[RMDB]
RNA sequence: GGGAACGACUCGAGUAGAGUCGAAAAACACGUGUGCCCCCACUGGUGAGUCUGCUCGUUCCUUGCAGAAGACCAAGUACGGUGAAAGGCACCGGUAGGCCCUGGGCUGGGCACACGUGAGAGGGCGCAACAGGAUAGGGUUCGCCCUAUCCUGUUGAAAAGAAACAACAACAACAAC
Reactivity to DMS in 0.01 (KOAc 150mM, MgCl2 10mM, bicine 150mM(pH8.5), 24C), signal-to-noise 6, nucleotides 027 to 126: a130c020a020c010g020u000g010u000g000c000c010c010c110c080a140c060u000g000g010u000g000a090g020u000c000u000g000c010u010c240g010u000u000c060c020u000u000g000c050a060g010a060a080g010a080c060c010a040a140g010u010a100c160g000g000u000g010a100a110a060g000g010c040a040c010c040g010g010u010a060g010g010c010c010c030u000g020g000g020c090u000g010g000g000c010a010c010a000c000g010u010g010a070g000a060g000g000g000c120g020
Reactivity to 2A3 in 0.01 (KOAc 150mM, MgCl2 10mM, bicine 150mM(pH8.5), 24C), signal-to-noise 3, nucleotides 027 to 126: a000c010a000c010g000u000g010u020g010c000c000c000c020c010a090c030u020g000g020u050g050a150g040u010c000u000g000c000u020c060g030u060u020c030c000u010u030g040c010a030g010a240a040g010a040c000c020a050a000g110u070a050c090g010g010u050g040a100a060a050g050g020c020a020c010c010g000g010u040a060g000g030c010c010c050u060g050g010g020c040u070g030g000g000c000a000c000a000c000g000u000g000a020g010a010g030g040g010c080g000